Description:
An RNA of 177 nucleotides, treated with DMS and read out base by base. The data come from the RNA Mapping Database (RMDB), library OK2TST. DMS (dimethyl sulfate) methylates the pairing face of unpaired adenines and cytosines. The DMS profile rests on 983 reads. The reactions ran in a buffer of 150 mM KOAc, 10 mM MgCl2 and 150 mM bicine (pH 8.5), at 24 C.
RNA sequence: GGGAACGACUCGAGUAGAGUCGAAAAAGGCCGUUCCGGCCGCCCCCGGUGCUUCCUUCGGUGAAGUUCUGUCGCAGAUGACGGGUUCCGUCAGCCAGAAAUUGCAGGCGGCAGAGGCAACGUCGAAACCUAGGAUCGGAUUCGUCCGAUCCUAGGUAAAAGAAACAACAACAACAAC
Reactivity to DMS in 0.01 (KOAc 150mM, MgCl2 10mM, bicine 150mM(pH8.5), 24C), signal-to-noise 1, nucleotides 027 to 126: a170g030g050c000c000g030u010u000c190c060g010g010c020c000g010c080c040c000c060c030g040g010u000g000c100u000u000c040c030u000u000c050g020g000u010g000a050a300g000u000u000c000u000g010u000c010g000c030a160g010a160u010g000a040c000g000g000g070u000u030c050c010g030u000c000a040g010c050c130a120g020a080a090a120u000u010g010c050a260g000g010c010g030g020c010a010g000a030g000g010c010a060a250c050g000u000c020g010a030a070